Conditions: 150 mM KOAc, 10 mM MgCl2 and 150 mM bicine (pH 8.5), 24 C.
The record gives the reactivity of an RNA of 177 nucleotides to DMS and 2A3.
For 2A3 the reverse transcriptase was SuperScript II with manganese.
Source: RMDB library M2PK90, as collected in RNAgym.
For DMS the reverse transcriptase was MarathonRT.
RNA sequence: GGGAACGACUCGAGUAGAGUCGAAAACAUCAGGAGGACCUUCCGCGCACUUCCAAGCUGGAGCUUUCCUUCCAAGCGCACUUCCAAUCUACUCGAGAGGAGGAGGAGGAGGAGGAUUCCCACAAAAGAUUGAGCAUUACUUCGGUAAUGCUCAAUCAAAAGAAACAACAACAACAAC
Reactivity to DMS in 0.01 (KOAc 150mM, MgCl2 10mM, bicine 150mM(pH8.5), 24C), signal-to-noise 1, nucleotides 027 to 126: c060a080u000c030a100g000g040a100g010g020a080c280c020u000u000c010c010g000c110g000c110a110c050u040u020c050c130a070a080g020c030u020g030g020a140g010c110u000u000u010c020c070u020u010c040c000a050a080g000c020g030c070a110c040u000u000c050c020a150a080u000c000u030a030c030u000c010g000a030g030a200g000g010a060g020g000a070g000g000a030g000g000a090g030g000a090g000g020a180u000u000c000c000c000a130c140a030a060a100a130
Reactivity to 2A3 in 0.01 (KOAc 150mM, MgCl2 10mM, bicine 150mM(pH8.5), 24C), signal-to-noise 1, nucleotides 027 to 126: c030a080u170c070a020g020g010a020g060g000a070c010c050u110u000c010c030g030c010g060c030a050c050u140u070c050c050a060a040g040c070u030g020g000a030g000c040u090u100u110c000c000u100u000c010c050a130a000g060c070g040c050a030c020u050u000c000c000a010a090u000c000u040a040c030u060c050g010a050g000a020g080g030a080g030g020a050g000g080a020g040g030a030g010g030a060g000g040a040u030u000c020c060c000a060c030a010a120a000a020